[RMDB]
RNA sequence: GGGAACGACUCGAGUAGAGUCGAAAACGUAUACGGCCCACCCGCCGCUAUGGUUAACGCUGGCCACCGACCCCUAUUGACGAAAGCCUUCCGCUAUGUACGACCCGCUGGGGUUGUCGAUCGGGACCCAACUGACUAUCUUCGGAUAGUCAGUUGGAAAAGAAACAACAACAACAAC
Reactivity to DMS in 0.01 (KOAc 150mM, MgCl2 10mM, bicine 150mM(pH8.5), 24C), signal-to-noise 2, nucleotides 027 to 126: c050g010u030a160u020a040c130g040g000c010c010c010a120c040c020c020g000c000c010g020c060u030a030u020g020g020u000u000a070a120c030g050c010u000g000g020c030c040a030c060c000g030a140c080c010c010c020u010a050u020u000g020a080c070g000a020a130a190g000c000c030u000u010c020c000g000c050u000a040u000g030u060a060c070g010a080c000c020c010g020c070u000g010g020g010g020u000u010g000u010c050g000a230u000c030g020g020g010a270c090
Reactivity to 2A3 in 0.01 (KOAc 150mM, MgCl2 10mM, bicine 150mM(pH8.5), 24C), signal-to-noise 6, nucleotides 027 to 126: c030g060u110a060u060a150c030g040g000c010c000c010a050c010c010c010g030c000c030g010c070u060a080u170g090g020u070u140a070a000c060g020c080u040g030g020c000c000a010c020c040g100a100c000c000c010c030u040a060u080u170g050a060c030g070a100a040a020g020c010c000u070u030c020c010g020c050u060a050u200g070u090a040c040g040a040c030c010c010g030c110u110g020g010g000g030u000u010g010u010c010g010a050u060c000g010g010g030a030c000
The record gives the reactivity of an RNA of 177 nucleotides to DMS and 2A3. For 2A3, 6,071 sequencing reads were counted. Reactivities are given for positions 27 through 126. For DMS the reverse transcriptase was MarathonRT. As a SHAPE reagent, 2A3 marks flexible, mostly unpaired nucleotides at the ribose 2'-OH. The reactions ran in a buffer of 150 mM KOAc, 10 mM MgCl2 and 150 mM bicine (pH 8.5), at 24 C.